[RMDB]
RNA sequence: GGGAACGACUCGAGUAGAGUCGAAAACGGCAAAAAAGCAAACUUGACCACCAAGGAUAAAAGAGAUCUUAUCCAAGGAUGCAAAAGAUAAUCUCACUUUUGACACCCACUGAUCUCAAACUUAAAGAAAACCGAGACUACUUCGGUAGUCUCGGAACUAUAUGAUCACGUUCGCGUGAUCAUAUAGAAAAGAAACAACAACAACAAC
Reactivity to DMS in 0.01 (KOAc 150mM, MgCl2 10mM, bicine 150mM(pH8.5), 24C), signal-to-noise 2, nucleotides 027 to 156: c090g040g030c050a000a060a120a090a050a070g000c000a040a120a100c040u000u000g010a300c210c020a090c010c010a110a300g010g000a090u000a030a040a050a170g000a200g000a080u000c010u000u000a090u000c090c040a060a270g030g040a020u010g000c040a020a070a040a000g030a170u000a100a100u000c120u020c130a090c030u000u000u000u000g000a190c000a030c020c000c030a240c150u000g000a040u000c020u020c040a080a100a070c050u000u010a040a070a090g010a110a040a060a170c000c000g010a000g000a000c000u000a020c000u010u010c260g020g010u000a010g000u000c000u000c010g000g000a000a020
Reactivity to 2A3 in 0.01 (KOAc 150mM, MgCl2 10mM, bicine 150mM(pH8.5), 24C), signal-to-noise 6, nucleotides 027 to 156: c030g040g000c030a010a010a040a050a050a070g100c080a120a090a090c080u110u090g050a190c010c010a020c010c020a060a040g030g000a030u030a050a070a040a020g010a000g000a000u000c010u030u030a020u050c040c020a050a040g020g000a030u090g000c010a010a020a020a010g030a070u120a220a190u140c080u050c110a050c010u040u010u020u020g080a080c020a050c020c010c000a050c110u070g010a010u000c000u000c010a030a060a080c040u090u100a100a040a020g100a020a070a030a010c000c000g000a000g000a000c000u000a000c000u020u060c170g050g000u000a000g000u000c000u000c000g000g000a000a000